[RMDB]
RNA sequence: GGGAACGACUCGAGUAGAGUCGAAAACUUAUCCGGUUUUAACGCUGUUUUAUUGGCGCAAAGGUUUACGUAUAAACAACUAAUAAUUAAACCUUUUGUGUGCGAAACGUGGUUGUUUAACGUACUCACUGCCCCCAGGGAUUCGUCCCUGGGGGAAGGUUAGCAUUGCUUUCGAGCAAUGCUAACCAAAAGAAACAACAACAACAAC
Reactivity to 2A3 in 0.01 (KOAc 150mM, MgCl2 10mM, bicine 150mM(pH8.5), 24C), signal-to-noise 1, nucleotides 027 to 156: c130u200u110a030u170c010c060g070g080u020u100u050u230a160a000c040g010c020u020g170u120u240u000u130a110u240u300g030g010c020g000c000a070a070a000g000g000u000u000u030a010c030g020u000a080u070a240a120a020c010a000a030c010u140a050a180u020a130a000u210u120a100a020a020c000c000u040u090u170u170g100u060g000u050g030c040g020a150a040a000c140g000u000g030g000u020u000g000u000u020u040a000a000c000g040u050a040c020u070c040a120c000u080g060c000c000c010c000c000a010g000g000g000a000u020u020c080g040u000c010c000c000u000g000g000g000g000g000a010a010

The data come from the RNA Mapping Database (RMDB), library M2RFPK. Structure probing data (2A3) for a 207-nucleotide construct.